[RMDB]
RNA sequence: GGGAACGACUCGAGUAGAGUCGAAAAGUAGAGUGUAUCAUGUCAGUAAGCAUGCCGGGGAAUGGUGGUGUACCCCGUUAUCAAAUGAUUACCGACCAAUAAUUGGCGAAACUCGUUUCGCGUUGGCAAAGUCACGGCGUGUUCGCACGCCGUGAAACAGUAUUAAGAGUUUCGACUCUUAAUACUGAAAAGAAACAACAACAACAAC
Reactivity to 2A3 in 0.01 (KOAc 150mM, MgCl2 10mM, bicine 150mM(pH8.5), 24C), signal-to-noise 6, nucleotides 027 to 156: g100u110a020g030a030g060u080g020u050a070u150c050a050u090g060u050c020a020g060u100a080a010g040c030a020u040g040c050c010g000g000g000g010a040a040u080g020g010u000g010g010u020g000u060a050c000c000c000c010g030u050u040a060u080c040a020a030a070u070g040a030u070u110a040c020c020g050a050c040c050a020a030u180a160a100u100u120g060g000c000g010a020a010a020c080u070c100g080u010u010u010c010g000c020g000u010u020g020g020c090a130a040a040g050u010c000a010c000g010g000c000g000u010g020u020u030c060g000c060a000c030g000c000c010g000u000g000a000a000a000
Reactivity to DMS in 0.01 (KOAc 150mM, MgCl2 10mM, bicine 150mM(pH8.5), 24C), signal-to-noise 2, nucleotides 027 to 156: g000u000a070g010a100g010u000g020u020a080u010c050a120u000g020u010c020a090g010u000a040a050g000c000a020u010g000c230c010g030g010g010g010a040a130u000g000g020u000g020g010u000g000u000a190c010c010c000c010g020u000u000a110u020c210a050a060a060u000g010a070u000u000a020c030c020g020a080c020c100a040a120u000a050a180u000u010g020g030c020g010a100a080a030c040u000c070g000u000u000u000c030g020c070g020u000u000g000g010c100a040a050a170g020u000c000a010c000g000g020c040g070u010g000u000u010c270g020c000a040c000g010c050c020g030u010g000a020a020a070
Structure probing data (2A3 and DMS) for a 207-nucleotide construct.
2A3 adducts were read by reverse transcription with SuperScript II with manganese.
Values cover nucleotides 27 to 156.
The RNA was probed in 150 mM KOAc, 10 mM MgCl2 and 150 mM bicine (pH 8.5) at 24 C.
The DMS profile rests on 6,319 reads.